The data come from the RNA Mapping Database (RMDB), library OK2TST. Structure probing data (DMS and 2A3) for a 177-nucleotide construct. 2A3 adducts were read by reverse transcription with SuperScript II with manganese. Reactivities are rounded to 0.1 and cut off at 0 and 3. The RNA was probed in 150 mM KOAc, 10 mM MgCl2 and 150 mM bicine (pH 8.5) at 24 C. For 2A3, 1,069 sequencing reads were counted.
RNA sequence: GGGAACGACUCGAGUAGAGUCGAAAACUCAGCGGCCGAACAGGUGGCGCAGGGCGUGAUCCAGCUCGGGCGCGCGGAACUGAUGUCCGGCGUCGGCCAACCGCAACGGUGACACCCGCUGGCUGGACAUCGUAGCGGGGUUCGCCCCGCUACGAUGAAAAGAAACAACAACAACAAC
Reactivity to DMS in 0.01 (KOAc 150mM, MgCl2 10mM, bicine 150mM(pH8.5), 24C), signal-to-noise 2, nucleotides 027 to 126: c030u000c020a130g020c000g010g010c060c010g020a040a090c140a080g000g030u000g020g030c020g000c020a080g000g000g000c030g010u010g020a110u010c070c100a190g000c040u000c070g010g000g010c010g010c030g000c000g010g020a100a100c110u010g040a100u000g000u010c000c010g000g000c030g010u000c030g040g000c020c030a120a040c030c030g000c170a090a100c100g010g030u000g010a190c130a140c100c030c020g000c080u000g010g010c040u020g000g000a150
Reactivity to 2A3 in 0.01 (KOAc 150mM, MgCl2 10mM, bicine 150mM(pH8.5), 24C), signal-to-noise 1, nucleotides 027 to 126: c010u030c030a000g030c020g050g000c020c030g030a080a080c040a160g030g160u050g040g060c060g050c050a070g050g000g010c030g050u100g020a180u060c080c020a040g030c090u110c100g070g050g010c050g050c030g070c030g010g030a070a070c050u150g030a140u120g130u020c010c000g030g000c020g020u040c020g000g000c000c010a020a030c030c000g020c130a170a020c060g000g000u050g030a010c020a100c040c010c010g010c010u040g060g040c010u010g050g010a020